[RMDB]
RNA sequence: GGGAACGACUCGAGUAGAGUCGAAAAGAUAUGGAGUUCUGACAGAACGAAGAACGCAUUCGGAAACGAAUGCGGGAGUUCUUUCAGAGACUCCUAAGUCAAAUCUCACCACUUCGGUGGUGAGAAAUCACUUUGUUCAGUUCGCUGAACAAAGUGAAAAAGAAACAACAACAACAAC
Reactivity to DMS in 0.01 (KOAc 150mM, MgCl2 10mM, bicine 150mM(pH8.5), 24C), signal-to-noise 2, nucleotides 027 to 126: g010a060u000a300u020g020g020a000g010u000u000c010u000g010a020c040a010g000a040a010c010g020a150a260g000a150a190c010g010c000a000u000u020c000g040g020a100a080a280c000g050a000a010u000g000c000g030g000g000a030g000u000u000c010u000u000u000c020a010g000a080g010a000c000u000c010c000u000a000a110g000u010c060a120a180a090u010c000u030c000a030c020c000a000c000u000u030c180g050g000u000g000g020u020g000a010g000a000a050a040